Source: RMDB library OK1LIB, as collected in RNAgym. An RNA of 177 nucleotides, treated with DMS and 2A3 and read out base by base.
RNA sequence: GGGAACGACUCGAGUAGAGUCGAAAACGGCACCACGAUUAUGCAUACACGUGGGUUGUCCCAAUCCGUGGUGCAGCUAUGAUGACGCGGAUGUAGAUUCGCACGAACGAUGUGAGGACUUAAUCCAACAGACAUACGUGUUCGCACGUAUGUCUGUAAAAGAAACAACAACAACAAC
Reactivity to DMS in 0.01 (KOAc 150mM, MgCl2 10mM, bicine 150mM(pH8.5), 24C), signal-to-noise 3, nucleotides 027 to 126: c090g010g010c020a060c000c000a000c010g010a040u050u010a070u030g000c090a080u070a100c270a070c090g040u000g000g000g000u000u000g000u030c010c000c010a160a040u010c110c010g010u000g000g010u030g000c010a050g060c090u000a050u030g000a080u020g010a130c070g030c080g000g030a030u000g020u010a030g020a090u000u000c050g030c000a070c040g010a090a150c120g000a110u010g010u020g010a100g010g000a040c020u010u010a090a070u020c010c020a060
Reactivity to 2A3 in 0.01 (KOAc 150mM, MgCl2 10mM, bicine 150mM(pH8.5), 24C), signal-to-noise 5, nucleotides 027 to 126: c030g030g020c050a020c000c000a010c000g010a010u120u120a030u160g120c090a060u120a180c080a010c210g080u150g000g030g030u040u100g070u020c010c000c000a000a010u020c030c010g030u000g010g000u050g010c000a030g030c040u070a030u250g070a090u120g060a060c030g000c020g050g000a000u040g020u070a060g030a300u020u000c020g010c010a010c060g090a210a040c040g050a080u200g040u020g040a070g000g020a000c010u050u090a070a010u050c030c000a000

For DMS, 4,531 sequencing reads were counted. For DMS the reverse transcriptase was MarathonRT.